[RMDB]
RNA sequence: GGGAACGACUCGAGUAGAGUCGAAAAGCGUACUACAUGAGCUAACAAGGCUUGGAUUUAAGGCUGUAAGUCCCAAAUAGGAUUGAGGCCUUUGUCAGCCUUGGACCCUCAUGUAUCGCAAAACGCAUGGAACACCCUUCGGGGUGUUCCAUGCGAAUACAAUAAUUCCUUUCGAGGAAUUAUUGUAAAAAGAAACAACAACAACAAC
Reactivity to 2A3 in 0.01 (KOAc 150mM, MgCl2 10mM, bicine 150mM(pH8.5), 24C), signal-to-noise 2, nucleotides 027 to 156: g030c030g060u130a070c060u000a000c010a010u000g000a000g000c020u030a150a000c000a000a000g000g030c030u080u140g160g000a050u250u220u220a000a010g010g000c010u010g100u280a000a000g000u050c040c000c060a190a300a110u270a120g010g000a030u010u040g030a030g030g020c020c020u010u000u020g000u000c010a000g000c010c000u000u010g000g000a000c000c000c010u000c000a000u000g020u000a000u070c030g010c010a000a000a050a090c030g000c020a000u010g010g000a000a010c000a010c010c010c000u100u050c300g070g000g000g000u000g020u000u020c000c010a000u010g000c000g010a000a000
Reactivity to DMS in 0.01 (KOAc 150mM, MgCl2 10mM, bicine 150mM(pH8.5), 24C), signal-to-noise 2, nucleotides 027 to 156: g030c030g060u000a060c050u000a020c010a020u000g010a030g000c000u030a100a300c010a030a020g000g020c010u040u000g010g010a020u010u000u000a030a020g040g000c010u000g010u020a200a210g030u000c000c000c010a050a150a190u030a060g010g000a050u000u000g010a270g000g010c000c000u000u010u020g020u000c020a050g010c000c010u000u010g000g000a160c300c240c010u000c020a020u000g030u010a010u000c040g000c020a090a040a100a120c010g070c020a030u010g000g000a030a040c000a050c000c000c000u000u030c300g050g040g010g020u000g000u000u010c000c000a000u000g020c000g000a030a070